[RMDB]
RNA sequence: GGGAACGACUCGAGUAGAGUCGAAAAGCUGCUUGCAAGGUACCUAAUUGUUUGAAAUUCAUUCUCAAUUGGUCCCCUCCAAGUAGCUCAAAACCCUCUGUUGCAUAGUUCGCUAUGCAACAGAGGGCGAAGCGGUAAUGUUCGCAUUACCGCUUCGAAAAGAAACAACAACAACAAC
Reactivity to 2A3 in 0.01 (KOAc 150mM, MgCl2 10mM, bicine 150mM(pH8.5), 24C), signal-to-noise 2, nucleotides 027 to 126: g000c000u010g000c000u000u020g000c030a030a010g000g000u010a000c000c020u170a050a020u030u020g130u190u110u130g110a130a120a100u300u200c090a140u130u020c060u000c030a010a030u000u000g020g000u030c040c000c000c000u040c010c000a000a000g000u020a000g000c000u010c000a060a070a010a020c010c000c000u020c000u000g000u000u000g020c010a000u000a000g000u010u000c060g040c080u000a000u010g000c000a000a000c000a000g000a000g000g000g000
Reactivity to DMS in 0.01 (KOAc 150mM, MgCl2 10mM, bicine 150mM(pH8.5), 24C), signal-to-noise 2, nucleotides 027 to 126: g030c020u000g020c030u000u000g010c210a070a030g030g020u000a010c020c000u000a010a030u000u000g000u000u000u010g000a050a040a260u010u020c230a120u000u000c010u000c000a000a030u010u000g010g000u010c070c050c000c030u000c300c000a020a000g010u000a020g010c000u000c070a050a060a050a260c010c010c000u000c000u000g000u010u000g030c000a000u000a010g030u020u020c300g000c010u000a000u020g010c000a000a000c010a020g000a000g000g000g000